[RMDB]
RNA sequence: GGGAACGACUCGAGUAGAGUCGAAAAUUGACUUACAUUGUCUGCCUUUUGUCGUGGACAGGUUUCUUGCCAAGUCUUAAUUCUGUUCUUUGAUGUUCUUUCUCACUGUGAGUGAACAGCCAUGUCCCAACUGAAAUAUCACAAGAAGGAACAGAAACCGGUAUAUCGAGUUCGCUCGAUAUACCGGAAAAGAAACAACAACAACAAC
Reactivity to 2A3 in 0.01 (KOAc 150mM, MgCl2 10mM, bicine 150mM(pH8.5), 24C), signal-to-noise 1, nucleotides 027 to 156: u090u070g040a010c010u010u120a010c020a140u010u130g030u000c000u010g050c010c010u220u240u060u250g140u210c040g040u030g000g020a010c010a020g030g000u120u080u090c070u170u190g060c050c060a010a010g010u030c010u050u110a140a140u090u100c020u090g050u000u040c000u000u050u110g080a100u020g010u000u010c000u000u090u050c030u020c010a160c120u100g000u010g070a000g020u060g030a110a120c010a020g020c020c000a080u140g060u080c000c000c010a010a030c000u040g010a070a050a020u250a040u000c020a010c040a060a030g020a000a020g020g000a000a000c010a010g000a030a030a040

Structure probing data (2A3) for a 207-nucleotide construct.
The RNA was probed in 150 mM KOAc, 10 mM MgCl2 and 150 mM bicine (pH 8.5) at 24 C.
2A3 adducts were read by reverse transcription with SuperScript II with manganese.
High 2A3 reactivity points to a flexible backbone, as in loops and unpaired stretches.